[RMDB]
This 177-nucleotide RNA was probed chemically with 2A3 and DMS.
RNA sequence: GGGAACGACUCGAGUAGAGUCGAAAACUCAUUGCCUUCAGUGCGGAAGUGGUUUUCUCAACUCCAAUCAAAAAGGCAGAAAAAGUAAAGCAACGCGAUUUUCGCGCUGUUUUUUCGCUGCAUGCAAUGAUCAACCAGAGUUCGCUCUGGUUGAUCAAAAAGAAACAACAACAACAAC
Reactivity to 2A3 in 0.01 (KOAc 150mM, MgCl2 10mM, bicine 150mM(pH8.5), 24C), signal-to-noise 3, nucleotides 027 to 126: c000u010c010a050u040u150g000c000c000u050u040c040a000g000u010g020c010g020g000a120a040g020u020g010g110u050u080u160u150c110u040c030a020a050c000u000c000c000a000a010u020c000a010a050a050a000a060g000g000c000a000g000a000a110a000a000a000g110u090a020a060a000g000c000a000a000c010g010c000g030a090u080u110u170u300c000g000c010g000c000u000g010u000u010u000u000u010u090c100g010c040u080g040c030a180u150g030c050a090a160
Reactivity to DMS in 0.01 (KOAc 150mM, MgCl2 10mM, bicine 150mM(pH8.5), 24C), signal-to-noise 3, nucleotides 027 to 126: c000u020c000a200u010u010g030c000c000u000u030c100a300g000u000g000c300g000g030a070a020g050u010g010g020u040u020u100u040c110u040c020a140a030c040u030c000c000a020a230u000c010a020a090a030a000a010g010g030c000a020g010a040a050a140a030a050g000u010a000a010a040g030c020a050a020c030g000c000g000a140u010u000u000u030c020g000c010g010c070u000g020u000u000u020u000u010u050c060g010c040u000g000c110a120u010g040c090a080a100